Source information
This 177-nucleotide RNA was probed chemically with 2A3. The RNA was probed in 150 mM KOAc, 10 mM MgCl2 and 150 mM bicine (pH 8.5) at 24 C. The data come from the RNA Mapping Database (RMDB), library RFM100.
RNA sequence: GGGAACGACUCGAGUAGAGUCGAAAAGCCGAGUAGCGAAAGUCGUUCCUUUUGGAAUGGCCUAGUUGCCCAGAAGCCUCCCCUCAAAAUCGUUUCAGUCCAAAAUUGAUUCGGCGGCCCUGUCAUGGGUAUGAGGUGCUUUCGAGCACCUCAUACCAAAAGAAACAACAACAACAAC
Reactivity to 2A3 in 0.01 (KOAc 150mM, MgCl2 10mM, bicine 150mM(pH8.5), 24C), signal-to-noise 1, nucleotides 027 to 126: g070c020c020g000a050g000u040a000g030c010g010a040a040a000g070u010c000g000u000u010c030c000u130u000u130u180g000g000a040a020u000g020g000c000c010u040a040g020u010u000g000c000c030c000a000g080a050a020g030c000c000u020c020c020c000c000u000c010a060a130a060a150u210c050g000u000u000u000c040a060g080u110c100c050a000a010a160a150u100u130g030a060u050u050c000g000g020c000g000g120c000c000c010u150g020u060c050a130u060g040